Chemical mapping of a 177-nucleotide RNA with DMS. The reactions ran in a buffer of 150 mM KOAc, 10 mM MgCl2 and 150 mM bicine (pH 8.5), at 24 C. DMS adducts were read by reverse transcription with MarathonRT.

[RMDB]
RNA sequence: GGGAACGACUCGAGUAGAGUCGAAAAGAAAAUCCCGGGGACCCCGCGCACCCGACAGAGCCCGUUGACCCUUGCUGCCUUCCAGCCCUCGGGGAGUUCACAGGAUAGACGCCGCGCGGGGUAAAAAACAGAAAUAAUGAUUCGUCAUUAUUUCUGUAAAAGAAACAACAACAACAAC
Reactivity to DMS in 0.01 (KOAc 150mM, MgCl2 10mM, bicine 150mM(pH8.5), 24C), signal-to-noise 1, nucleotides 027 to 126: g010a130a160a140a160u000c020c010c010g000g010g000g020a130c030c010c010c000g040c000g040c030a120c130c100c020g060a080c150a040g030a080g030c070c030c020g000u000u010g000a130c050c040c030u000u020g000c070u000g020c300c020u010u000c000c020a100g040c030c060c010u010c080g020g000g000g000a020g000u000u000c040a080c020a150g000g010a080u000a120g000a090c050g040c130c070g010c020g000c040g010g020g010g020u020a000a040a040a050a040